[RMDB]
RNA sequence: GGGAACGACUCGAGUAGAGUCGAAAAGAUGUGAGGACGUACUCAGGCAUCAUUUUCCAAUAGGAAGUGAGGCUGACGCUCAGAGGGUACACAAGAGAUUGACAUAUAUGCUGAAAGAUACGGAGUCUACUGAACUAAGUUUCGACUUAGUUCAGUAAAAAGAAACAACAACAACAAC
Reactivity to 2A3 in 0.01 (KOAc 150mM, MgCl2 10mM, bicine 150mM(pH8.5), 24C), signal-to-noise 7, nucleotides 027 to 126: g060a040u110g040u050g090a060g030g040a020c070g040u070a050c050u020c060a040g020g020c010a080u020c010a020u190u100u060u000c030c000a050a230u230a130g020g010a030a020g010u030g020a010g050g000c030u020g020a020c050g030c050u030c020a030g030a040g080g020g030u080a030c050a010c030a070a030g030a000g020a110u070u120g010a010c030a010u120a010u030a030u160g040c040u070g100a170a070a030g070a020u090a090c070g010g020a020g030u000c030
Reactivity to DMS in 0.01 (KOAc 150mM, MgCl2 10mM, bicine 150mM(pH8.5), 24C), signal-to-noise 9, nucleotides 027 to 126: g010a060u000g010u000g000a080g010g010a140c120g020u000a080c080u000c050a160g010g020c020a060u000c010a020u000u010u010u000c010c020a190a140u010a100g020g010a020a020g010u000g000a030g010g020c020u000g010a090c160g020c070u000c040a070g000a110g000g000g010u000a040c080a100c110a060a080g000a070g000a080u000u000g000a060c070a060u000a070u010a060u010g000c040u000g000a060a050a060g000a110u000a040c070g000g010a180g010u000c080

Chemical mapping of a 177-nucleotide RNA with 2A3 and DMS. Source: RMDB library OK2TRN, as collected in RNAgym. Values cover nucleotides 27 to 126. The reactions ran in a buffer of 150 mM KOAc, 10 mM MgCl2 and 150 mM bicine (pH 8.5), at 24 C.